[RMDB]
RNA sequence: GGGAACGACUCGAGUAGAGUCGAAAACAGAUCUGGAGCAGAGUUUACGGCGUUUAGGCAGAGCAAGGAGCAGAUCAGCUUAGCAGAUGAACUAGAGGAAGAACGUACGACGGCCGUCUUGAAUGUAAAGCCCUUAGAGAUUCGUCUCUAAGGGCUUAAAAGAAACAACAACAACAAC
Reactivity to DMS in 0.01 (KOAc 150mM, MgCl2 10mM, bicine 150mM(pH8.5), 24C), signal-to-noise 2, nucleotides 027 to 126: c110a120g010a100u000c050u010g000g010a100g000c070a100g020a090g000u000u000u010a100c120g020g010c050g010u000u000u000a080g010g010c020a090g000a070g010c080a070a080g000g000a080g000c020a060g010a100u020c080a080g020c020u010u000a080g010c070a080g000a110u000g020a050a060c050u010a080g000a100g010g000a080a080g000a060a040c100g000u000a060c070g000a070c120g010g000c030c020g000u000c040u000u010g010a080a100u010g010u010a060